Conditions: 150 mM KOAc, 10 mM MgCl2 and 150 mM bicine (pH 8.5), 24 C. The record gives the reactivity of an RNA of 177 nucleotides to 2A3. The 2A3 profile rests on 436 reads. It was measured as part of the RMDB library RFM100.
RNA sequence: GGGAACGACUCGAGUAGAGUCGAAAAGUAAUUACAGUGCUUUGUUUUGGGGAAGUACUGCUGUUAUCCUGCUGAAAGACAAGCUGUGUUAGUCAUUUUUGAUUUUGCCUUUAUGAGGGUAAAAAUCGAAGGAGCAACGUUUCGACGUUGCUCCUUCAAAAGAAACAACAACAACAAC
Reactivity to 2A3 in 0.01 (KOAc 150mM, MgCl2 10mM, bicine 150mM(pH8.5), 24C), signal-to-noise 1, nucleotides 027 to 126: g040u060a000a000u000u010a010c000a000g010u000g000c000u160u000u040g250u300u210u150u220g110g040g000g000a000a000g000u040a000c000u000g010c060u040g000u050u110a050u000c000c000u040g070c020u000g170a300a000a000g050a100c000a010a010g000c010u020g080u000g070u200u110a050g000u000c050a050u000u060u090u090u090g040a010u000u000u000u000g000c000c000u000u170u000a170u300g120a300g000g000g000u180a050a050a030a000a000u010c100